[RMDB]
RNA sequence: GGGAACGACUCGAGUAGAGUCGAAAAAAGGUAAGCAAAAAAGGAUCCAGCUUAGGUAAAAAGAAACAUGUCUUACAGCCAGAGUUUACACUCCAUAAAAUGGAGUAUGUUCUGAGUCCAGGUGAACUUAUUUCUUGCGGUUCGCCGCAAGAAAUAAAAAAGAAACAACAACAACAAC
Reactivity to DMS in 0.01 (KOAc 150mM, MgCl2 10mM, bicine 150mM(pH8.5), 24C), signal-to-noise 2, nucleotides 027 to 126: a090a070g000g010u000a000a010g000c040a000a010a080a110a000a090g010g000a050u000c000c040a100g080c120u000u000a050g000g000u040a010a060a130a100a140g020a040a020a020c110a020u020g000u000c040u000u020a040c120a180g030c020c020a050g000a050g000u000u010u040a060c100a080c030u000c000c000a020u060a100a020a070a300u000g000g010a060g000u000a010u010g000u000u040c000u050g000a140g010u020c020c000a080g000g020u040g000a020a050c180
Reactivity to 2A3 in 0.01 (KOAc 150mM, MgCl2 10mM, bicine 150mM(pH8.5), 24C), signal-to-noise 1, nucleotides 027 to 126: a000a000g100g000u050a000a000g040c010a020a080a000a000a000a020g150g070a040u080c000c080a000g000c070u000u080a070g130g000u110a000a100a000a000a000g120a010a200a000c030a080u110g120u060c000u000u050a070c010a000g030c000c000a000g000a000g030u000u000u090a110c110a000c040u000c000c000a110u230a100a060a000a000u020g000g000a000g000u000a000u080g000u050u000c000u030g050a000g020u050c000c000a000g030g000u040g050a000a000c000

Chemical mapping of a 177-nucleotide RNA with DMS and 2A3.
DMS adducts were read by reverse transcription with MarathonRT.
It was measured as part of the RMDB library RFM100.
For 2A3 the reverse transcriptase was SuperScript II with manganese.